[RMDB]
RNA sequence: GGGAACGACUCGAGUAGAGUCGAAAAAACUAAUGAGCCUUAUACCAGAGCUUGCUCUUACUAUUAUAACAGAUGUUAUAGCUGGAAUUAUCUUGUAUUUCGUCUGCAAAUGGCUAGAUGGUAAGAAUGUGAGAUUCAUUUUCGAAUGAAUCUCACAAAAAGAAACAACAACAACAAC
Reactivity to DMS in 0.01 (KOAc 150mM, MgCl2 10mM, bicine 150mM(pH8.5), 24C), signal-to-noise 4, nucleotides 027 to 126: a060a060c080u030a070a090u010g010a080g000c010c020u000u010a090u010a140c080c040a080g000a110g000c040u010u020g010c050u000c020u020u000a040c030u010a030u000u000a080u010a100a110c030a040g000a030u010g020u000u000a030u000a030g050c030u000g000g000a060a130u020u030a070u010c020u000u020g010u000a030u000u000u000c020g020u000c030u000g000c060a070a080a100u010g010g000c050u010a040g010a060u000g000g010u010a010a030g010a080a130
Reactivity to 2A3 in 0.01 (KOAc 150mM, MgCl2 10mM, bicine 150mM(pH8.5), 24C), signal-to-noise 5, nucleotides 027 to 126: a000a000c210u210a130a070u170g050a030g050c000c000u150u070a160u040a090c010c000a040g010a000g100c010u040u030g020c000u020c000u030u020a060c030u020a040u150u070a110u020a190a030c010a030g060a070u060g000u040u040a010u040a060g120c040u030g010g020a070a090u220u080a110u250c010u010u020g020u080a020u010u060u010c030g000u000c010u010g010c010a030a080a160u090g050g020c030u050a040g010a070u020g030g000u000a010a020g050a050a050
An RNA of 177 nucleotides, treated with DMS and 2A3 and read out base by base. High DMS reactivity at an A or C suggests that its Watson-Crick edge is free. The RNA was probed in 150 mM KOAc, 10 mM MgCl2 and 150 mM bicine (pH 8.5) at 24 C.